[RMDB]
RNA sequence: GGGAACGACUCGAGUAGAGUCGAAAACAGAUUCAACGCUGACAAAGAACCGGUGCAUGGAGGCUGUUGCUGCCCUGAAGCGUGAGUUCUUUGCGGCACAGGCACCGUUGCUAGAAACUUCGCGGUAGUUUUAGGAUCGGUUCGCCGAUCCUAAAACAAAAGAAACAACAACAACAAC
Reactivity to DMS in 0.01 (KOAc 150mM, MgCl2 10mM, bicine 150mM(pH8.5), 24C), signal-to-noise 1, nucleotides 027 to 126: c100a240g010a070u000u030c120a160a080c140g010c020u020g000a130c040a020a080a010g010a050a030c060c020g000g030u000g050c010a140u010g000g040a300g050g000c030u000g010u000u000g010c140u000g010c020c030c110u040g000a110a090g000c020g000u010g010a150g010u000u050c010u000u000u000g010c000g000g020c020a080c140a050g010g030c080a050c030c000g000u010u030g020c000u000a140g030a080a100a060c090u000u010c090g000c100g000g000u020a040
Reactivity to 2A3 in 0.01 (KOAc 150mM, MgCl2 10mM, bicine 150mM(pH8.5), 24C), signal-to-noise 1, nucleotides 027 to 126: c020a020g080a160u160u150c100a110a100c110g020c010u080g180a180c030a010a050a000g000a000a000c030c000g040g120u230g010c070a090u190g010g010a050g010g010c010u100g190u300u180g060c050u030g010c000c000c050u000g110a130a090g040c070g020u100g050a200g000u050u000c000u000u040u040g030c000g050g040c020a000c000a020g090g070c010a000c000c010g030u090u110g000c020u030a050g080a070a240a070c040u040u070c110g040c070g090g000u080a120
An RNA of 177 nucleotides, treated with DMS and 2A3 and read out base by base. Conditions: 150 mM KOAc, 10 mM MgCl2 and 150 mM bicine (pH 8.5), 24 C. The 2A3 profile rests on 749 reads.